[RMDB]
RNA sequence: GGGAACGACUCGAGUAGAGUCGAAAAGCGUACUACGUGACCUGUAUAACGAAGAACUAUUGAACUACCAGAUCCCAAAUAGGAUCUGGCAAUAGGGAGUUAUACUGGUCACGUAUCGCAAAAGUCGUUUGCGUUAGUUCGCUAACGCAAACGACAACCAUGCCAUUAUGUUCGCAUAAUGGCAUGGAAAAGAAACAACAACAACAAC
Reactivity to DMS in 0.01 (KOAc 150mM, MgCl2 10mM, bicine 150mM(pH8.5), 24C), signal-to-noise 1, nucleotides 027 to 156: g030c020g010u010a040c160u020a010c010g020u000g020a020c010c000u000g000u000a010u000a020a020c000g010a150a160g010a140a300c010u000a020u010u010g040a140a130c050u020a150c040c020a000g000a020u010c000c000c040a080a140a170u010a050g020g010a010u000c000u000g010g000c000a000a020u000a050g050g020g000a290g020u010u000a010u000a010c000u000g010g000u010c000a000c010g010u000a000u000c030g020c010a040a020a030a030g000u010c000g050u000u000u000g010c000g030u000u000a010g000u000u000c300g040c000u000a010a040c010g000c020a000a000a000c000g000a000c020a000a000
Reactivity to 2A3 in 0.01 (KOAc 150mM, MgCl2 10mM, bicine 150mM(pH8.5), 24C), signal-to-noise 4, nucleotides 027 to 156: g010c010g030u120a100c050u010a000c030g010u000g000a000c000c010u000g030u000a020u000a020a040c100g200a300a080g020a040a010c010u010a010u010u020g040a110a080c070u090a080c290c000a000g000a010u020c040c030c050a180a300a060u300a100g000g000a000u000c000u000g000g000c010a000a000u000a010g010g000g000a030g010u000u000a000u000a000c010u010g000g000u010c020a000c000g000u000a010u010c000g000c000a040a000a010a090g000u000c000g000u000u000u020g000c000g000u000u000a000g000u040u040c260g010c200u010a000a000c010g000c000a000a000a000c000g000a000c000a000a000